[RMDB]
RNA sequence: GGGAACGACUCGAGUAGAGUCGAAAACUGCAGUGGGUGACUGGUUAUCACAACUUUGAACAUCACUCACUCUUCAAUGGCAUUGAUAACCCAGACCUAUAUUUCCAGAAUCCCUAUGGAAAUAUACCACUAGGGAACACUUCGGUGUUCCCUAGUGAAAAGAAACAACAACAACAAC
Reactivity to 2A3 in 0.01 (KOAc 150mM, MgCl2 10mM, bicine 150mM(pH8.5), 24C), signal-to-noise 1, nucleotides 027 to 126: c060u110g020c110a010g020u040g010g000g030u020g050a050c120u100g040g110u070u090a110u170c070a040c080a170a190c080u150u140u240g080a090a010c020a050u010c000a010c030u010c020a010c020u040c010u070u070c030a050a140u070g060g000c080a060u050u120g050a070u200a070a060c000c000c020a030g000a020c000c010u020a010u010a040u030u040u000c040c000a000g020a050a100u050c040c010c000u040a050u050g000g010a020a020a010u000a000u010a070c040
Reactivity to DMS in 0.01 (KOAc 150mM, MgCl2 10mM, bicine 150mM(pH8.5), 24C), signal-to-noise 2, nucleotides 027 to 126: c160u000g030c080a010g050u000g000g010g010u000g000a030c300u010g020g020u000u000a050u000c170a130c250a070a080c140u020u020u000g000a060a010c080a100u010c020a000c060u000c030a020c030u000c050u000u000c130a100a060u020g000g000c060a300u000u020g000a030u010a100a120c040c010c110a080g020a120c200c080u020a050u000a010u000u000u010c000c040a010g000a170a150u000c000c010c020u000a220u010g000g000a010a000a020u000a020u010a060c300

Conditions: 150 mM KOAc, 10 mM MgCl2 and 150 mM bicine (pH 8.5), 24 C.
An RNA of 177 nucleotides, treated with 2A3 and DMS and read out base by base.
Reactivities are given for positions 27 through 126.
For 2A3 the reverse transcriptase was SuperScript II with manganese.